The record gives the reactivity of an RNA of 177 nucleotides to 2A3 and DMS.
[RMDB]
RNA sequence: GGGAACGACUCGAGUAGAGUCGAAAAUAUAUAUUACCUGCGCAGGUAAAGAGGUGCCACUCUUGACAUCAUCAAUAAUAUACGGAACACUUUUGCGUGAUGACGUUGACGUGCUGUGCGUAAGGGGCCAGUUACUUAGCUUCGGCUAAGUAACUGGAAAAGAAACAACAACAACAAC
Reactivity to 2A3 in 0.01 (KOAc 150mM, MgCl2 10mM, bicine 150mM(pH8.5), 24C), signal-to-noise 1, nucleotides 027 to 126: u050a000u050a010u020a060u050u140a030c060c000u000g000c000g000c030a000g020g030u090a090a030a000g030a040g010g010u100g000c000c020a030c020u020c000u030u030g010a000c020a060u000c010a070u000c040a010a050u190a250a020u150a070u130a100c040g010g030a070a070c040a030c060u010u260u060u300g120c080g000u070g060a130u160g000a020c040g010u010u050g090a060c070g020u030g000c010u010g030u010g030c010g010u020a080a090g000g040g060g010
Reactivity to DMS in 0.01 (KOAc 150mM, MgCl2 10mM, bicine 150mM(pH8.5), 24C), signal-to-noise 2, nucleotides 027 to 126: u000a150u010a120u000a130u030u000a070c000c010u000g000c130g030c080a170g010g000u000a070a040a050g040a100g020g000u030g000c040c070a070c090u000c060u000u010g000a070c040a090u000c010a080u000c040a080a090u000a050a080u030a090u000a060c060g000g000a110a110c210a030c060u020u000u010u000g000c210g000u010g000a120u010g000a080c060g000u000u010g000a050c290g000u000g010c110u020g020u010g000c050g000u000a040a050g040g020g080g030
Source information
The 2A3 profile rests on 870 reads.